[RMDB]
RNA sequence: GGGAACGACUCGAGUAGAGUCGAAAACUCACAGUCACAGCUAUUAGAGCUGUCCUUGCUUCUUUGGGUUUACUGUUUUAGUUAAUUAGUUACCCUAUGAAAGUCUGAUCCUUCAGAAGUUAGGUAUUGUGCCAAUAUGUUUCGACAUAUUGGCACAAAAAGAAACAACAACAACAAC
Reactivity to 2A3 in 0.01 (KOAc 150mM, MgCl2 10mM, bicine 150mM(pH8.5), 24C), signal-to-noise 4, nucleotides 027 to 126: c010u030c010a100c030a010g160u160c040a020c000a020g010c020u030a070u280u280a180g020a030g150c010u010g000u000c000c010u010u010g000c000u000u040c010u050u050u020g010g020g000u100u130u020a010c000u020g170u100u100u020u010a060g060u090u140a070a110u030u030a040g070u060u060a060c080c000c020u030a050u060g080a170a020a010g040u010c210u120g040a060u030c000c000u010u000c000a020g000a030a000g000u000u070a010g000g020u050a130u030
Reactivity to DMS in 0.01 (KOAc 150mM, MgCl2 10mM, bicine 150mM(pH8.5), 24C), signal-to-noise 1, nucleotides 027 to 126: c010u000c010a120c210a140g000u010c160a080c000a030g000c000u000a110u000u010a100g000a040g000c000u000g000u030c020c000u000u030g010c010u000u000c000u000u020u000g010g010g000u020u030u000a030c000u000g010u000u000u000u010a100g000u000u000a030a040u030u010a030g000u020u000a020c080c030c010u000a100u010g000a050a040a010g030u010c270u000g000a080u000c090c010u000u030c040a050g000a020a000g020u010u010a010g030g020u020a130u010